[RMDB]
RNA sequence: GGGAACGACUCGAGUAGAGUCGAAAAGGAAAUUAUGAAUCUGGUUUCCCUGCACAGGUUGGAUGAUGCCUAUGCGCGUUUGAACGUGCUGUUGGAACGCAAUCCGAAUGCAGACCUGUAUAUUCAGGGACCUACUCCGCUUCGGCGGAGUAGGUCCAAAAGAAACAACAACAACAAC
Reactivity to 2A3 in 0.01 (KOAc 150mM, MgCl2 10mM, bicine 150mM(pH8.5), 24C), signal-to-noise 1, nucleotides 027 to 126: g000g000a060a000a040u190u060a130u300g130a000a000u040c040u000g010g000u000u000u000c000c000c090u000g040c000a000c040a060g090g050u000u060g100g100a000u000g000a090u300g110c000c000u100a120u180g000c000g000c000g000u000u170u290g280a300a170c000g000u000g000c000u000g200u170u040g000g000a100a030c160g000c000a000a000u010c000c000g000a110a080u140g120c000a000g020a020c000c000u010g060u030a030u000a000u170u230c060a000g020
Source: RMDB library OK1LIB, as collected in RNAgym. Chemical mapping of a 177-nucleotide RNA with 2A3. 2A3 is a SHAPE reagent: it acylates the 2'-hydroxyl of flexible nucleotides of all four kinds. Values are in units of 0.01, from 0 to 300, in steps of 10.